[RMDB]
RNA sequence: GGGAACGACUCGAGUAGAGUCGAAAAGAUAUGGACCCGCAUAGCCUCUGAGCUCGUUGAUCUCGGAAACGAGGGAGAGCACAGAGGCGCAUAGGGUCCUAAGUCAAAACGGUACUUCGGUACCGAAUCCUUUUUACUGCUUCGGCAGUAAAAAGGAAAAAGAAACAACAACAACAAC
Reactivity to DMS in 0.01 (KOAc 150mM, MgCl2 10mM, bicine 150mM(pH8.5), 24C), signal-to-noise 1, nucleotides 027 to 126: g010a050u000a300u010g030g000a000c000c000c000g010c170a150u000a200g000c000c010u000c010u000g000a060g000c010u000c010g010u010u000g010a060u000c000u000c000g030g000a050a080a110c010g010a020g010g000g000a010g000a000g000c000a110c020a000g000a030g010g000c010g000c050a020u010a160g000g010g000u000c000c000u000a000a030g010u010c080a090a080a140a110c000g010g000u000a010c000u000u030c180g010g030u000a000c010c000g000a050a060
Reactivity to 2A3 in 0.01 (KOAc 150mM, MgCl2 10mM, bicine 150mM(pH8.5), 24C), signal-to-noise 1, nucleotides 027 to 126: g030a010u070a060u210g000g000a020c020c070c000g060c170a110u190a020g010c010c010u040c000u000g030a030g050c000u010c020g300u300u040g000a010u040c000u050c030g020g020a090a040a080c030g000a010g090g020g010a000g000a000g000c040a020c000a010g000a000g010g030c000g010c000a020u080a040g000g010g010u010c010c000u010a090a000g060u040c020a020a030a080a100c030g020g000u000a010c010u000u090c300g220g010u000a000c000c000g000a020a010

The record gives the reactivity of an RNA of 177 nucleotides to DMS and 2A3. It was measured as part of the RMDB library TTRDEL. Reactivities are given for positions 27 through 126. For 2A3 the reverse transcriptase was SuperScript II with manganese. The reactions ran in a buffer of 150 mM KOAc, 10 mM MgCl2 and 150 mM bicine (pH 8.5), at 24 C. For DMS the reverse transcriptase was MarathonRT.